[RMDB]
RNA sequence: GGGAACGACUCGAGUAGAGUCGAAAAACUGACGGUACGCCGUCAGAACGGUAGAAAAGAUGGUUUGAAAACCACGCCUUCUACCAAUAUAGUAAAUAAAUAGGCGGAGCGGUCGUACGUGACCGCAAAAACAUCCUUGGCUUCGGCCAAGGAUGAAGCUGUACCUACUCUUCGGAGUAGGUACAGCAAAAGAAACAACAACAACAAC
Reactivity to 2A3 in 0.01 (KOAc 150mM, MgCl2 10mM, bicine 150mM(pH8.5), 24C), signal-to-noise 1, nucleotides 027 to 156: a050c010u010g000a010c010g000g000u030a040c240g070c020c000g020u010c000a010g000a040a000c020g000g000u020a020g010a010a020a000a000g070a250u010g000g080u010u070u150g120a100a090a000a010c000c000a000c010g000c000c000u000u020c000u000a000c000c020a040a000u110a030u050a010g070u030a000a000a210u070a020a070a040u150a010g010g000c000g090g020a010g010c000g000g020u000c010g090u130a130c010g010u020g030a010c000c000g040c000a000a000a020a000a020c000a000u020c000c000u000u000g000g000c000u000u040c130g030g000c020c000a000a000g000g000a000u010g000a000a020